RNA sequence: GGGAACGACUCGAGUAGAGUCGAAAAAACACUAUUUCGAUAGUGUUACAGAUCCUAAGUCACGUGACAUGGUUGGCACGAAGAACUGGUCGGAAACGACCAGGGAGUGCCUCCAACAGCACGUGAUAUGGAAAAAUGGAUCAAUUCGUUGAUCCAACAAUGACUGAUUCUUCGGAAUCAGUCAUUGAAAAGAAACAACAACAACAAC
Reactivity to 2A3 in 0.01 (KOAc 150mM, MgCl2 10mM, bicine 150mM(pH8.5), 24C), signal-to-noise 5, nucleotides 027 to 156: a000a000c040a020c030u050a040u050u150u060c100g060a020u010a000g000u000g000u010u020a020c030a050g170a130u050c000c000u040a110a040g020u000c000a000c010g020u010g070a160c030a140u040g060g030u180u100g020g090c000a010c030g160a280a040g010a030a020c000u000g000g010u010c020g010g000a070a070a080c010g000a000c000c010a000g000g000g010a010g000u000g000c000c000u000c000c000a030a020c050a010g030c000a000c000g000u000g000a000u020a010u020g030g070a070a080a020a040a080u120g000g000a000u010c000a010a020u130u110c250g090u090u010g000a000u000c000c000a000a020
Reactivity to DMS in 0.01 (KOAc 150mM, MgCl2 10mM, bicine 150mM(pH8.5), 24C), signal-to-noise 2, nucleotides 027 to 156: a010a000c000a000c000u000a010u000u000u000c280g030a070u000a020g000u000g020u000u000a090c080a120g000a110u000c000c000u000a050a230g010u000c020a000c020g000u010g000a150c000a300u010g030g000u010u020g010g030c010a020c000g000a140a240g010a100a140c000u000g000g020u000c000g020g000a160a170a270c000g000a020c020c000a010g010g010g010a190g010u000g010c000c000u010c000c010a050a050c060a110g000c010a020c010g020u010g000a010u000a110u010g010g010a030a040a080a100a180u010g010g010a020u000c000a040a100u000u000c210g000u010u000g000a050u010c000c000a050a230